Description: An RNA of 177 nucleotides, treated with 2A3 and DMS and read out base by base. Reactivities are given for positions 27 through 126.
[RMDB]
RNA sequence: GGGAACGACUCGAGUAGAGUCGAAAAGAUCAAUUAUGAUUGCAAUGUAAUAUGUCAAGGCAGACAUAUCUAGCUGUCGCCUUAGCUAGAGAUCGCCGUUUUAUUGCUUUCAUAAGAACGGCGAGAACAGUACCGACUAGUUCGCUAGUCGGUACUGAAAAGAAACAACAACAACAAC
Reactivity to 2A3 in 0.01 (KOAc 150mM, MgCl2 10mM, bicine 150mM(pH8.5), 24C), signal-to-noise 3, nucleotides 027 to 126: g020a040u040c020a000a120u300u120a170u300g040a020u010u020g020c040a030a100u120g050u290a120a040u040a050u080g020u020c020a010a020g050g000c010a010g010a010c000a010u050a080u000c010u000a000g010c000u000g080u090c050g080c030c020u050u070a000g000c000u000a020g000a020g020a090u010c000g000c000c000g010u000u020u020u000a030u020u030g020c020u020u110u060c140a100u120a130a010g000a010a000c000g000g010c010g000a020g010a040a020
Reactivity to DMS in 0.01 (KOAc 150mM, MgCl2 10mM, bicine 150mM(pH8.5), 24C), signal-to-noise 3, nucleotides 027 to 126: g000a060u000c020a070a180u010u010a090u000g000a030u000u000g000c150a100a040u020g020u010a100a150u000a030u000g000u000c020a070a050g010g000c020a040g020a020c030a040u000a070u000c010u010a020g020c020u000g020u000c170g000c060c040u000u000a020g000c000u000a000g000a130g010a100u000c010g010c000c010g000u010u000u000u000a050u010u000g000c060u000u000u000c100a070u000a070a040g000a020a020c020g000g000c000g000a020g010a070a160